Record summary
The record gives the reactivity of an RNA of 177 nucleotides to 2A3 and DMS. DMS adducts were read by reverse transcription with MarathonRT. Values cover nucleotides 27 to 126. It was measured as part of the RMDB library OK1LIB. 2A3 adducts were read by reverse transcription with SuperScript II with manganese. The 2A3 profile rests on 1,825 reads.
[RMDB]
RNA sequence: GGGAACGACUCGAGUAGAGUCGAAAAGAGGAAAUCGUGUCUUGGAGCGCGCGGAGUAAACAUAUAUGGUUCAUAUAUAACCGUAGGCACGUAAAGAAAGCGGGUAAGGCAGAGAGAACUGCCAGAACCACGUAGUCACGUUCGCGUGACUACGUGGAAAAGAAACAACAACAACAAC
Reactivity to 2A3 in 0.01 (KOAc 150mM, MgCl2 10mM, bicine 150mM(pH8.5), 24C), signal-to-noise 3, nucleotides 027 to 126: g160a030g010g090a010a090a070u120c010g020u030g040u010c010u030u090g150g050a090g080c010g000c000g000c020g020g020a090g030u150a000a130a060c080a000u060a000u020a000u030g200g100u230u200c080a010u010a000u030a000u010a050a030c020c030g000u000a000g000g030c000a000c000g000u060a000a000a080g100a040a090a010g030c100g000g050g040u110a120a060g010g000c010a000g020a000g000a010g000a050a020c000u010g000c000c000a000g000a030a000
Reactivity to DMS in 0.01 (KOAc 150mM, MgCl2 10mM, bicine 150mM(pH8.5), 24C), signal-to-noise 1, nucleotides 027 to 126: g000a130g000g000a010a080a110u000c100g030u020g080u000c010u010u050g010g000a170g040c020g000c050g030c020g020g000a140g030u040a010a120a150c100a050u000a000u000a040u010g010g010u010u020c100a090u020a020u020a000u000a090a090c000c000g060u000a050g000g000c030a010c000g010u000a070a010a000g040a020a050a090g000c040g000g000g050u000a110a030g010g000c000a000g000a030g000a300g000a010a140c030u000g020c000c010a150g020a040a140